Source information: Chemical mapping of a 207-nucleotide RNA with 2A3. The reactions ran in a buffer of 150 mM KOAc, 10 mM MgCl2 and 150 mM bicine (pH 8.5), at 24 C. 2A3 adducts were read by reverse transcription with SuperScript II with manganese.
RNA sequence: GGGAACGACUCGAGUAGAGUCGAAAAAGCCUGGUCGAUACGUCGACAAGGCAAUGCCGCCACAACGGCUUCCUGGCGUGGCGGAUCUCAUCCAAUGGAGCAACGCUCCGGAUACGUCCGGAGCGAAAAAAGCUCUGCUUCUUCGGAAGCAGAGCAAGAAAGCGUAUAGGUUCGCCUAUACGCUUUCAAAAGAAACAACAACAACAAC
Reactivity to 2A3 in 0.01 (KOAc 150mM, MgCl2 10mM, bicine 150mM(pH8.5), 24C), signal-to-noise 1, nucleotides 027 to 156: a000g300c000c000u020g010g000u000c000g000a000u030a070c190g050u010c000g010a000c020a020a000g020g000c010a010a010u050g010c000c000g000c010c000a030c010a050a020c020g090g010c030u120u140c030c000u020g010g000c000g000u000g000g010c010g000g000a010u010c020u030c050a090u050c010c040a060a130u130g000g020a030g000c010a050a080c020g000c000u030c000c010g020g000a030u040a060c170g040u000c010c000g000g000a020g000c000g000a000a000a000a000a000a000g000c000u000c000u000g020c000u010u030c000u020u040c050g040g000a000a020g000c000a000g000a000g000c000a000a000
The 2A3 profile rests on 920 reads.